[RMDB]
RNA sequence: GGGAACGACUCGAGUAGAGUCGAAAAUUACCCGGCUUCGGCCGGGUAAACAGCAGAGCCGUCGCGUAGGAUGCCGGCUACUCAAGGGAUGUUCCCACGCGAGAAACGGGUCGUUCGCGACCCGUAAUUGUGUAGUAUAUUUCGAUAUACUACACAAAAAAGAAACAACAACAACAAC
Reactivity to 2A3 in 0.01 (KOAc 150mM, MgCl2 10mM, bicine 150mM(pH8.5), 24C), signal-to-noise 2, nucleotides 027 to 126: u020u000a010c000c010c010g000g020c030u060u070c190g110g020c010c050g000g010g010u000a000a000a000c020a000g030c010a010g040a010g130c020c010g090u130c060g000c030g070u100a050g060g160a050u070g020c000c010g040g000c020u060a100c010u020c010a050a050g050g000g050a100u140g030u010u000c000c060c010a030c020g110c050g050a130g090a060a200a000c010g000g000g020u000c010g000u020u040c100g000c010g020a000c020c000c000g000u010a010a020
Reactivity to DMS in 0.01 (KOAc 150mM, MgCl2 10mM, bicine 150mM(pH8.5), 24C), signal-to-noise 6, nucleotides 027 to 126: u000u000a000c000c000c000g010g010c010u000u010c240g030g030c000c000g010g010g000u000a000a010a020c100a100g010c120a110g000a120g010c030c020g010u000c070g020c060g000u000a090g010g010a130u010g020c050c010g000g000c010u000a010c010u000c030a070a090g000g010g010a130u010g000u000u000c000c000c000a110c160g010c120g000a090g000a070a110a040c000g010g000g010u000c000g020u010u010c160g010c010g010a010c000c000c000g020u000a010a030